[RMDB]
RNA sequence: GGGAACGACUCGAGUAGAGUCGAAAAUGUUUGCUGACGCAACCCCCACUGGCUGGGGCUUGGCCAUAGGCCAUCAGCGCAUGCGUGGAACCUUUGUGGCUCCUCUGCCGAUCCAUACUGCGGAACUCGUCACGAUCAGCUUCGGCUGAUCGUGACGAAAAGAAACAACAACAACAAC
Reactivity to 2A3 in 0.01 (KOAc 150mM, MgCl2 10mM, bicine 150mM(pH8.5), 24C), signal-to-noise 2, nucleotides 027 to 126: u030g020u010u010u290g030c050u030g040a000c030g020c010a000a180c000c000c020c000c010a020c120u150g200g000c060u000g000g030g020g000c000u020u010g010g020c000c040a150u100a170g000g000c000c010a050u060c060a030g010c020g000c040a000u230g000c010g000u030g010g000a080a080c010c000u000u100u280g200u140g000g000c000u000c010c000u050c050u060g040c020c000g020a030u040c010c010a050u030a190c030u040g000c010g060g000a000a010c050u040